[RMDB]
RNA sequence: GGGAACGACUCGAGUAGAGUCGAAAAGAAAAUAAAGCGCACCUAUAAGGUGGUGCGCAACAAGCGUGACCUAGGAUCACGCAUCCACGCGUCUCCUAAGACGCGAAAGGUAUUCCAAAUAAAAAAACAAACUAUAAAUGUUCGCAUUUAUAGUUUGAAAAGAAACAACAACAACAAC
Reactivity to DMS in 0.01 (KOAc 150mM, MgCl2 10mM, bicine 150mM(pH8.5), 24C), signal-to-noise 2, nucleotides 027 to 126: g010a110a030a050a100u000a030a170a090g000c000g010c000a000c000c020u000a200u010a160a100g000g030u030g000g040u000g010c000g000c000a000a000c170a070a150g000c000g000u010g000a010c010c100u020a170g010g000a100u000c010a000c010g010c000a010u000c070c030a090c030g000c000g000u000c030u000c260c180u010a150a060g000a010c000g020c000g000a000a030a010g010g000u000a040u000u000c010c040a090a060a020u030a040a020a040a060a090a040a160
Reactivity to 2A3 in 0.01 (KOAc 150mM, MgCl2 10mM, bicine 150mM(pH8.5), 24C), signal-to-noise 2, nucleotides 027 to 126: g000a000a030a010a020u160a030a080a030g030c000g010c000a000c040c030u120a120u080a300a110g210g080u100g000g000u000g070c000g010c010a010a020c000a020a000g000c010g000u030g000a030c010c080u160a110g080g060a160u000c010a000c010g000c000a020u010c010c000a040c010g000c000g000u000c000u040c000c030u100a150a030g000a000c000g000c000g010a060a060a000g040g000u030a040u030u110c010c040a030a100a080u250a030a060a040a020a010a000a020
The data come from the RNA Mapping Database (RMDB), library M2PK90. This 177-nucleotide RNA was probed chemically with DMS and 2A3. The RNA was probed in 150 mM KOAc, 10 mM MgCl2 and 150 mM bicine (pH 8.5) at 24 C. For 2A3, 2,350 sequencing reads were counted. The DMS profile rests on 1,225 reads. For DMS the reverse transcriptase was MarathonRT.